[RMDB]
RNA sequence: GGGAACGACUCGAGUAGAGUCGAAAAGGACAAAUCAGAUUUUUCCUCUUGAUUUCAGCAUUUUCCUCCUGGCAAAAUUUAAAUCCAACUGAAAAUGCUAAAAUUCAGGAGGAAUAAGUCUGAUUUGCGUGUUACUUUCUUUCGAGAAAGUAACACGAAAAGAAACAACAACAACAAC
Reactivity to 2A3 in 0.01 (KOAc 150mM, MgCl2 10mM, bicine 150mM(pH8.5), 24C), signal-to-noise 4, nucleotides 027 to 126: g070g020a020c000a000a000a000u000c000a000g000a020u000u000u000u000u010c000c000u000c000u000u000g000a000u010u000u010c010a010g020c010a000u000u010u010u010c010c020u060c050c070u010g000g010c050a030a030a040a190u100u280u160a060a080a070u150c010c000a010a010c050u020g000a000a000a000a000u000g000c000u020a010a030a010a010u200u090c000a000g010g000a000g000g000a000a000u010a000a000g000u000c000u000g000a000u000u000u000g000
Reactivity to DMS in 0.01 (KOAc 150mM, MgCl2 10mM, bicine 150mM(pH8.5), 24C), signal-to-noise 2, nucleotides 027 to 126: g000g010a300c000a030a000a010u000c020a010g000a000u000u000u020u000u000c020c000u000c020u000u000g000a000u000u000u000c080a000g000c020a000u000u000u030u000c000c110u020c220c140u020g000g020c300a050a050a100a140u020u050u050a060a070a130u010c000c010a010a090c150u010g000a000a000a000a000u000g000c020u020a040a000a030a000u020u030c000a000g020g040a000g020g000a020a000u020a000a010g050u000c000u000g000a020u000u000u000g010